RNA sequence: GGGAACGACUCGAGUAGAGUCGAAAAAAAACCAUUCGAGCUAGUCAUUGCGUGGCGUGUCUCUCCGCAGCGUGUUGGCGAAUGUAAAGAGUGACUAAGCAUGUAGUACCGAGGAUGUAGUAAUUUUGAAACUCGCGCAUCUUCGGAUGCGCGAGAACCAUAAGGUAUGGUUCGCCAUACCUUAUGGAAAAGAAACAACAACAACAAC
Reactivity to DMS in 0.01 (KOAc 150mM, MgCl2 10mM, bicine 150mM(pH8.5), 24C), signal-to-noise 1, nucleotides 027 to 156: a040a020a060a070c060c000a110u000u000c030g000a130g060c050u010a060g040u000c020a090u000u010g020c060g050u000g000g030c030g050u010g030u010c050u000c050u010c080c010g000c010a050g020c020g040u030g020u000u000g040g000c000g000a090a050u000g030u000a110a040a100g000a150g000u000g010a090c080u010a040a090g010c020a100u000g050u020a140g040u000a060c020c040g000a110g010g010a060u000g000u000a050g020u020a060a110u000u000u010u000g000a070a060a120c000u000c030g060c020g000c000a020u000c000u010u020c300g000g010a010u000g030c000g000c000g010a000g000a000a080
Reactivity to 2A3 in 0.01 (KOAc 150mM, MgCl2 10mM, bicine 150mM(pH8.5), 24C), signal-to-noise 3, nucleotides 027 to 156: a000a010a000a050c030c000a030u120u090c060g020a020g050c020u060a020g050u040c020a080u050u160g040c060g040u040g060g000c050g040u090g010u000c050u000c010u000c060c020g040c020a050g020c020g010u060g040u030u070g030g010c030g010a070a060u090g030u170a050a010a000g060a000g000u020g000a030c040u050a040a050g020c030a040u050g020u100a030g030u030a060c020c110g020a020g010g010a020u060g030u020a070g040u050a140a170u060u160u120u200g110a050a050a030c010u000c000g000c000g000c000a010u000c000u030u030c130g070g010a000u010g000c010g000c000g010a000g000a010a000
Overview
Chemical mapping of a 207-nucleotide RNA with DMS and 2A3. The reactions ran in a buffer of 150 mM KOAc, 10 mM MgCl2 and 150 mM bicine (pH 8.5), at 24 C. Reactivities are rounded to 0.1 and cut off at 0 and 3. DMS adducts were read by reverse transcription with MarathonRT. For 2A3 the reverse transcriptase was SuperScript II with manganese.